RNA sequence: GGGAACGACUCGAGUAGAGUCGAAAAUUCAGGCCAUAUUCAUCUGAUUCACUCCCAUGCCUGGAGGUGUCACUAAAGGAGGCUGCAGAACAGCAAAGAUGGGUGCCUGCUCCUUCUUCUGGGACCUCUGAUCUCGAGGGGCACCAACCUGAUGCCACGUCAGUAGCAGUUUCGACUGCUACUGACGAAAAGAAACAACAACAACAAC
Reactivity to 2A3 in 0.01 (KOAc 150mM, MgCl2 10mM, bicine 150mM(pH8.5), 24C), signal-to-noise 1, nucleotides 027 to 156: u140u050c020a020g050g000c010c050a230u300a220u300u160c080a230u070c070u030g030a090u010u050c060a020c060u020c020c000c050a030u170g000c000c020u010g000g000a010g010g020u100g010u040c050a060c100u140a030a030a030g000g000a000g020g020c150u050g000c020a020g020a080a130c070a120g050c090a160a050a060g290a050u240g100g020g020u000g060c000c000u000g020c010u000c020c020u020u020c030u120u020c020u030g050g000g020a030c000c000u000c030u050g170a230u050c100u050c000g080a050g000g020g020g060c040a040c040c000a000a030c010c010u080g000a050u040g110c020c010a040